Structure probing data (DMS and 2A3) for a 177-nucleotide construct. Conditions: 150 mM KOAc, 10 mM MgCl2 and 150 mM bicine (pH 8.5), 24 C.
[RMDB]
RNA sequence: GGGAACGACUCGAGUAGAGUCGAAAAUGCAACGUUCUUGCCCGAGGUUUAUGAAGAAGGAACGACUCCUGAUAGGUACACCUACACUGAGGGUUCAACCGCAAAUGGCUUAGUCAUCUAUGAUGAACUACUAUCUCCCAUUCGUGGGAGAUAGUAGAAAAGAAACAACAACAACAAC
Reactivity to DMS in 0.01 (KOAc 150mM, MgCl2 10mM, bicine 150mM(pH8.5), 24C), signal-to-noise 6, nucleotides 027 to 126: u010g020c100a100a110c080g010u000u000c030u000u000g010c030c020c030g020a170g010g000u010u010u010a090u010g020a120a060g000a110a050g010g010a060a090c120g010a110c090u000c010c030u000g000a190u000a040g010g000u000a090c200a070c040c020u000a060c160a070c080u010g000a130g000g000g000u000u000c070a050a100c040c050g030c090a040a040a100u000g000g000c060u010u010a100g010u000c010a010u000c030u000a080u020g000a060u020g000a070a200
Reactivity to 2A3 in 0.01 (KOAc 150mM, MgCl2 10mM, bicine 150mM(pH8.5), 24C), signal-to-noise 5, nucleotides 027 to 126: u090g010c040a050a050c070g020u040u000c010u060u090g030c000c000c010g050a060g060g030u100u120u100a120u250g100a040a110g030a020a040g050g030a070a060c070g100a110c080u030c010c010u040g040a090u070a070g010g060u050a030c060a070c030c010u040a010c060a020c090u040g030a080g040g030g000u050u030c050a080a060c030c010g020c050a030a050a080u090g040g000c020u070u080a020g030u050c010a030u000c090u170a130u240g050a050u040g010a030a030